[RMDB]
RNA sequence: GGGAACGACUCGAGUAGAGUCGAAAAUUUAUCUGAUGAAGUCCUUGGAGCUAACACAGCUUUCGUAGGUGACUUUAAACGUGGUGUAUUGUUUGCUGACCGUAAAGACUUAGGUCUACGCUGGGCAGAUAACGAAAUCUACGGACAAUACUUGCAAUACAUCAAGCUAGUUCGCUAGCUUGAUGUAAAAAGAAACAACAACAACAAC
Reactivity to 2A3 in 0.01 (KOAc 150mM, MgCl2 10mM, bicine 150mM(pH8.5), 24C), signal-to-noise 1, nucleotides 027 to 156: u130u120u060a120u040c030u070g060a070u070g010a040a000g050u020c010c010u050u070g040g000a000g000c010u050a300a030c090a020c020a140g050c010u080u160u200c060g070u060a030g000g060u090g100a030c000u050u040u060a070a100a040c020g010u030g000g010u020g050u050a060u050u050g060u030u030u140g070c020u030g030a040c000c000g020u020a170a210a010g000a000c000u050u100a110g020g180u000c010u040a030c110g020c090u100g020g050g000c010a010g020a060u050a050a000c000g020a020a070a000u000c010u040a030c020g000g060a000c070a080a050u120a150c040u020u070g000c000a020a090
Reactivity to DMS in 0.01 (KOAc 150mM, MgCl2 10mM, bicine 150mM(pH8.5), 24C), signal-to-noise 3, nucleotides 027 to 156: u000u010u000a110u030c050u020g020a170u000g030a030a060g000u010c010c000u040u010g050g010a080g030c010u000a120a200c170a220c210a150g010c030u000u000u000c040g030u010a090g010g050u000g020a050c030u010u000u000a050a090a130c050g030u000g020g010u010g050u010a090u000u000g020u010u000u000g000c040u000g010a080c100c010g000u020a070a110a120g010a060c020u000u010a090g050g000u000c010u010a040c100g010c040u000g040g010g020c010a020g030a080u000a040a070c060g020a070a070a060u000c030u000a070c030g020g020a090c050a040a080u010a100c050u000u000g010c070a080a230